[RMDB]
This 177-nucleotide RNA was probed chemically with 2A3 and DMS. For DMS the reverse transcriptase was MarathonRT. Conditions: 150 mM KOAc, 10 mM MgCl2 and 150 mM bicine (pH 8.5), 24 C.

RNA sequence: GGGAACGACUCGAGUAGAGUCGAAAAUGCUCAGAGAAACAUACAUCAGUGAUGGAAGAUAAAGAGCAGCAAGACAAUGCGAAACUUGAAAACAAUGAGUCACUAAAAGAUCUGGGAGUUAACGUGCACCGAUUUGAUCAUUCGUGAUCAAAUCGGUAAAAGAAACAACAACAACAAC
Reactivity to 2A3 in 0.01 (KOAc 150mM, MgCl2 10mM, bicine 150mM(pH8.5), 24C), signal-to-noise 2, nucleotides 027 to 126: u060g000c000u000c000a000g050a000g020a020a240a000c050a130u240a030c050a130u100c060a120g030u040g030a000u030g070g050a030a030g000a050u070a080a080a000g000a020g000c000a000g020c000a060a010g080a050c090a090a050u040g010c040g070a060a040a000c020u020u050g050a040a050a020a000c040a020a110u150g010a000g010u030c010a010c020u100a000a100a000a000g030a040u020c020u010g050g000g000a030g030u090u080a050a030c060g020u060g030c010
Reactivity to DMS in 0.01 (KOAc 150mM, MgCl2 10mM, bicine 150mM(pH8.5), 24C), signal-to-noise 2, nucleotides 027 to 126: u000g040c000u000c040a080g020a080g010a120a050a080c110a130u010a080c040a090u040c080a080g030u000g050a010u000g000g060a130a290g010a080u000a040a040a130g000a060g020c140a230g000c050a000a050g000a070c300a090a100u010g040c020g020a070a100a000c050u000u000g000a070a110a010a070c060a080a070u010g020a120g010u000c010a040c020u000a050a050a100a020g000a080u010c040u000g000g000g020a090g010u000u020a040a040c130g070u010g010c140